Source: RMDB library M2RFPK, as collected in RNAgym.
Structure probing data (DMS) for a 207-nucleotide construct.
RNA sequence: GGGAACGACUCGAGUAGAGUCGAAAACAUGGGGAACUACAUCUGUGUCGCGAGUUCGAUUCUCGCCAGGGCGUGGUCCUGUAGCUCAGUUGGUAGAGCAAGCUGUUCCCCGGACACUUGUCGUCAUAAAAGUUGCCCCCGUUCGCGGGGGCAACAACAAACAUAGCUGCUUCGGCAGCUAUGUUUGAAAAGAAACAACAACAACAAC
Reactivity to DMS in 0.01 (KOAc 150mM, MgCl2 10mM, bicine 150mM(pH8.5), 24C), signal-to-noise 1, nucleotides 027 to 156: c030a170u000g030g000g000g000a100a040c020u000a010c020a120u020c040u000g010u000g000u040c000g020c040g000a030g050u000u010c030g000a300u000u020c010u000c000g000c010c030a040g040g000g000c000g010u000g120g000u000c010c000u000g010u020a020g000c000u000c000a100g060u000u000g000g020u000a000g000a030g000c020a120a120g010c090u000g000u020u000c000c000c010c010g020g000a120c040a070c170u000u020g030u000c030g000u000c000a150u000a030a150a090a180g000u010u010g010c030c000c010c020c050g000u000u020c300g000c060g050g050g000g090g000c030a000a000c010a010a050